[RMDB]
The data come from the RNA Mapping Database (RMDB), library OK3TST. Chemical mapping of a 207-nucleotide RNA with DMS and 2A3. For DMS, 3,783 sequencing reads were counted. The reactions ran in a buffer of 150 mM KOAc, 10 mM MgCl2 and 150 mM bicine (pH 8.5), at 24 C.

RNA sequence: GGGAACGACUCGAGUAGAGUCGAAAAGAUAGGCGCGCCGCCGUCUCGUGGCUGACCCUAUUUCGCGGCGCUGUAGACGGGCCAGCGGGUGUGGUAUGAAACAGCGUCAGGUAAAUACACGGUGUUUGUCCGCCAUAUUGUGUACCCUCGUCUCCUCCAGCACUAUAUUCUUCGGAAUAUAGUGCUGAAAAGAAACAACAACAACAAC
Reactivity to DMS in 0.01 (KOAc 150mM, MgCl2 10mM, bicine 150mM(pH8.5), 24C), signal-to-noise 2, nucleotides 027 to 156: g010a180u010a080g020g030c070g010c110g000c050c010g040c010c040g000u000c060u000c080g040u000g060g010c030u000g000a140c070c010c000u010a230u000u000u010c080g010c080g040g020c010g000c020u030g000u010a030g000a140c150g030g040g040c110c040a150g000c050g010g040g040u000g050u060g040g070u000a090u010g010a130a100a070c040a070g000c040g040u000c030a100g030g020u010a060a080a070u000a090c080a040c070g020g020u000g010u010u010u000g000u010c060c040g040c010c030a100u000a050u000u010g010u000g010u000a080c000c010c020u000c050g030u000c010u000c010c010u010c020
Reactivity to 2A3 in 0.01 (KOAc 150mM, MgCl2 10mM, bicine 150mM(pH8.5), 24C), signal-to-noise 3, nucleotides 027 to 156: g120a070u140a070g030g000c020g000c010g000c060c020g010c020c010g060u020c060u060c060g070u070g040g010c040u020g050a070c010c010c020u060a160u050u100u120c110g030c060g070g000c020g000c030u010g010u040a090g010a060c080g050g020g000c040c020a070g030c070g050g020g000u080g010u080g000g080u110a100u210g110a080a050a010c010a010g000c000g040u050c010a020g110g030u120a060a070a020u110a040c050a010c040g020g050u050g020u040u090u100g050u030c050c000g010c020c040a070u070a060u140u090g070u010g020u040a040c000c000c020u010c010g050u010c000u010c020c000u030c030